[RMDB]
Notes:
Chemical mapping of a 177-nucleotide RNA with DMS and 2A3. 2A3 adducts were read by reverse transcription with SuperScript II with manganese. The DMS profile rests on 1,275 reads.

RNA sequence: GGGAACGACUCGAGUAGAGUCGAAAAGCCAUCGGUGAUGAGUCAGGCGCCGCUAUCGAGGAGGCGGUCGAUCAGUUCGUGGCUGGCAUGCCGGCGUGCGGCGAGGACGCGCCCGUCCCACUGACCGAUGCAAGCCAGCAUUCGUGCUGGCUUGCAUAAAAGAAACAACAACAACAAC
Reactivity to DMS in 0.01 (KOAc 150mM, MgCl2 10mM, bicine 150mM(pH8.5), 24C), signal-to-noise 1, nucleotides 027 to 126: g010c070c040a120u010c010g000g010u010g020a070u010g010a120g000u010c040a070g010g010c030g010c060c040g030c080u000a110u010c100g000a060g030g000a100g010g010c000g010g020u000c020g010a040u010c040a100g000u020u020c120g040u020g010g000c020u020g000g000c050a070u000g010c010c010g000g020c020g030u000g020c060g000g020c020g000a070g020g000a030c100g000c060g000c060c020c040g000u000c020c010c030a050c110u010g010a120c020c020g000
Reactivity to 2A3 in 0.01 (KOAc 150mM, MgCl2 10mM, bicine 150mM(pH8.5), 24C), signal-to-noise 1, nucleotides 027 to 126: g000c020c010a050u060c030g040g010u110g050a120u000g030a030g040u030c000a000g060g070c010g050c000c020g100c020u090a160u300c030g050a020g070g000a050g010g140c060g010g100u010c010g000a070u090c000a010g020u250u060c070g060u100g050g000c030u000g080g070c050a050u270g010c010c050g080g030c050g050u050g020c060g000g000c010g010a020g130g010a050c070g000c010g000c070c030c010g000u000c060c010c000a000c000u050g060a070c050c000g000